Background:
Structure probing data (DMS and 2A3) for a 177-nucleotide construct. It was measured as part of the RMDB library OK2TST. The DMS profile rests on 16,956 reads. The reactions ran in a buffer of 150 mM KOAc, 10 mM MgCl2 and 150 mM bicine (pH 8.5), at 24 C.
[RMDB]
RNA sequence: GGGAACGACUCGAGUAGAGUCGAAAAUACGGAUGCCACUGACUUUUGAAAAUCACUGACUGUCCUGAGCAUUCUUAGGUUUCACGUGUCUCUACAUAAAGCAUAAGAAAAGAGCAUUGAAUUGCUGUAUAACUGUUCAAUUCGUUGAACAGUUAUAAAAAGAAACAACAACAACAAC
Reactivity to DMS in 0.01 (KOAc 150mM, MgCl2 10mM, bicine 150mM(pH8.5), 24C), signal-to-noise 9, nucleotides 027 to 126: u000a090c140g010g000a060u000g010c020c020a050c110u010g010a070c060u000u010u010u000g000a090a080a100a090u010c050a040c080u010g010a060c070u010g020u000c010c070u000g010a110g020c100a080u000u000c020u000u000a060g010g010u000u000u010c050a060c150g010u000g000u000c060u000c050u010a070c100a060u000a060a050a060g010c060a050u010a060a090g000a040a050a060a080g010a050g010c010a030u000u000g010a110a100u000u000g020c020u000g010
Reactivity to 2A3 in 0.01 (KOAc 150mM, MgCl2 10mM, bicine 150mM(pH8.5), 24C), signal-to-noise 6, nucleotides 027 to 126: u100a010c030g020g010a010u040g030c010c010a030c060u010g040a050c020u100u060u060u120g090a100a090a050a070u140c040a060c110u080g080a020c020u040g030u030c000c000u010g020a020g020c010a040u070u010c000u030u050a070g000g030u020u040u050c050a040c050g050u060g030u030c020u000c020u100a060c020a070u160a070a110a020g050c030a060u060a190a050g080a080a090a010a010g110a010g000c030a010u010u090g050a150a300u080u040g000c010u010g010